An RNA of 177 nucleotides, treated with DMS and 2A3 and read out base by base. The RNA was probed in 150 mM KOAc, 10 mM MgCl2 and 150 mM bicine (pH 8.5) at 24 C. For DMS, 3,679 sequencing reads were counted. The 2A3 profile rests on 1,897 reads. It was measured as part of the RMDB library OK1LIB.
[RMDB]
RNA sequence: GGGAACGACUCGAGUAGAGUCGAAAAGACUUUAAAGUUUGAACUUUAUGGCGCUUUUGCUGCAGUUACAUGGUUCAAGUAAAAGUGGAUUGGGUCACCUACCAUGUGGUGAAUCUCCAACGGGUCAGGACGAACAUGGCUUCGGCUAUGUUCGUCCAAAAGAAACAACAACAACAAC
Reactivity to DMS in 0.01 (KOAc 150mM, MgCl2 10mM, bicine 150mM(pH8.5), 24C), signal-to-noise 2, nucleotides 027 to 126: g000a060c040u010u000u020a050a080a060g010u010u040u050g010a140a120c020u020u000u000a010u070g000g000c050g010c000u020u000u000u010g010c000u000g000c080a010g030u000u050a040c060a020u000g000g010u000u010c110a060a030g000u010a020a040a030a040g010u010g020g000a200u010u010g000g000g000u010c000a020c000c000u000a070c060c080a040u000g030u000g000g000u000g000a150a030u020c040u010c010c020a030a020c070g000g000g000u000c000a200
Reactivity to 2A3 in 0.01 (KOAc 150mM, MgCl2 10mM, bicine 150mM(pH8.5), 24C), signal-to-noise 1, nucleotides 027 to 126: g040a020c000u050u040u070a060a070a000g030u000u120u100g080a030a000c010u060u000u000a120u030g090g000c000g000c010u020u060u000u000g000c000u000g020c000a010g000u010u010a000c000a010u010g030g030u050u140c030a020a010g000u000a010a010a010a010g010u010g000g000a030u000u010g010g000g020u000c000a000c000c000u000a000c000c000a000u000g000u010g010g000u010g000a050a040u020c050u000c000c010a010a000c030g010g000g000u000c000a030